[RMDB]
Conditions: 150 mM KOAc, 10 mM MgCl2 and 150 mM bicine (pH 8.5), 24 C. An RNA of 207 nucleotides, treated with 2A3 and read out base by base.
RNA sequence: GGGAACGACUCGAGUAGAGUCGAAAAAUAAUCAAUUAAAACAACGUAAUAACCAACUCAAAACAGAACUCAAAUCAAAAGACCAACAAAUCAAAGGACUUACUGGUCAACUAGACAGAACGCAGUAUCAGCUUAAAAAAGUAAGUGAAGAAUCAGCCAGUGUUCUAACCUUCGGGUUAGAACACUGAAAAGAAACAACAACAACAAC
Reactivity to 2A3 in 0.01 (KOAc 150mM, MgCl2 10mM, bicine 150mM(pH8.5), 24C), signal-to-noise 1, nucleotides 027 to 156: a000u100a020a020u080c050a000a010u110u200a130a160a030a060c060a130a000c100g060u090a020a020u160a110a100c030c020a010a120c040u070c110a070a200a040a090c100a070g070a060a050c050u000c030a060a060a090u020c020a000a090a150a060g030a060c120c000a000a000c070a090a040a130u060c010a050a150a130g060g000a000c000u020u000a000c040u070g020g020u010c000a000a120c040u040a010g010a070c100a020g080a060a100c100g000c070a030g010u030a010u120c000a000g020c010u020u080a020a050a030a050a000a080g030u070a040a000g010u040g070a020a000g040a080a060u150c000a010g140c060
Values are in units of 0.01, from 0 to 300, in steps of 10.